[RMDB]
RNA sequence: GGGAACGACUCGAGUAGAGUCGAAAAGAUAUGGAGAGCAUCGAUCAUGGCGAGACUAAGACAGUCGGAAACGAUCGAGUCUCCCAUGGGAGCUCUCCUAAGUCAAAUCUGACGUUCGCGUCAGAAACGUCACACUACAGUUCGCUGUAGUGUGACGAAAAGAAACAACAACAACAAC
Reactivity to DMS in 0.01 (KOAc 150mM, MgCl2 10mM, bicine 150mM(pH8.5), 24C), signal-to-noise 2, nucleotides 027 to 126: g050a120u030a300u000g010g010a010g030a030g010c030a270u000c140g030a100u010c010a010u000g000g000c210g000a010g000a000c000u000a130a070g010a160c300a160g010u000c000g010g030a070a090a200c010g000a010u010c080g020a000g020u000c000u000c000c030c000a000u000g000g020g030a030g000c000u000c000u000c000c000u010a000a020g030u000c040a070a080a140u010c000u010g000a050c000g000u000u010c160g010c000g030u000c000a010g010a010a110a170
Reactivity to 2A3 in 0.01 (KOAc 150mM, MgCl2 10mM, bicine 150mM(pH8.5), 24C), signal-to-noise 2, nucleotides 027 to 126: g020a030u070a060u170g010g000a020g010a000g000c020a190u300c050g120a100u080c040a000u030g000g000c230g000a000g000a000c020u030a100a040g040a160c080a050g040u050c010g040g000a090a050a040c050g010a020u120c040g000a000g000u000c010u000c020c000c020a010u000g000g030g000a000g000c000u030c000u000c000c000u010a010a000g000u000c020a030a010a180u020c000u000g000a000c010g020u050u040c300g020c000g130u000c020a020g120a040a020a000
Structure probing data (DMS and 2A3) for a 177-nucleotide construct. For DMS, 1,000 sequencing reads were counted. The reactions ran in a buffer of 150 mM KOAc, 10 mM MgCl2 and 150 mM bicine (pH 8.5), at 24 C. DMS adducts were read by reverse transcription with MarathonRT. It was measured as part of the RMDB library TTRDEL. For 2A3, 2,478 sequencing reads were counted. Values cover nucleotides 27 to 126.